[RMDB]
This 177-nucleotide RNA was probed chemically with 2A3 and DMS. The RNA was probed in 150 mM KOAc, 10 mM MgCl2 and 150 mM bicine (pH 8.5) at 24 C. For 2A3, 1,642 sequencing reads were counted. Source: RMDB library M2PK50, as collected in RNAgym.
RNA sequence: GGGAACGACUCGAGUAGAGUCGAAAAGGCGCGACGUUCGCGUCGCGCCAAAGCGCCUUGCCUGCUUCGGGCCAGAAACAGGCACAGGGACCCGAGGCAACAAAAGUACUUCGUUCGCGAAGUACAACUUUAAAUUGAUCUUCGGAUCAAUUUAAAGAAAAGAAACAACAACAACAAC
Reactivity to 2A3 in 0.01 (KOAc 150mM, MgCl2 10mM, bicine 150mM(pH8.5), 24C), signal-to-noise 1, nucleotides 027 to 126: g000g110c070g020c020g090a020c070g040u140u140c180g070c030g040u000c020g050c000g000c050c000a000a010a000g020c040g070c000c000u010u040g040c010c030u010g020c000u010u000c010g060g030g100c080c010a090g060a030a150a010c040a020g140g000c080a000c100a030g060g020g100a150c030c000c000g020a030g040g000c000a040a000c020a040a190a040a050g000u000a000c000u020u000c000g070u050u080c250g000c000g110a010a000g000u010a000c010a000a000
Reactivity to DMS in 0.01 (KOAc 150mM, MgCl2 10mM, bicine 150mM(pH8.5), 24C), signal-to-noise 2, nucleotides 027 to 126: g000g050c000g060c010g030a080c030g040u010u000c150g000c020g200u000c020g080c040g010c010c010a000a030a020g030c300g000c020c000u000u010g000c100c040u000g000c030u000u000c000g000g010g000c100c140a110g000a070a060a070c050a020g000g000c030a020c090a070g020g000g000a100c000c000c010g000a040g000g000c040a050a080c100a060a080a090a070g000u000a010c010u000u000c000g010u000u000c140g000c010g010a010a010g010u000a000c000a030a100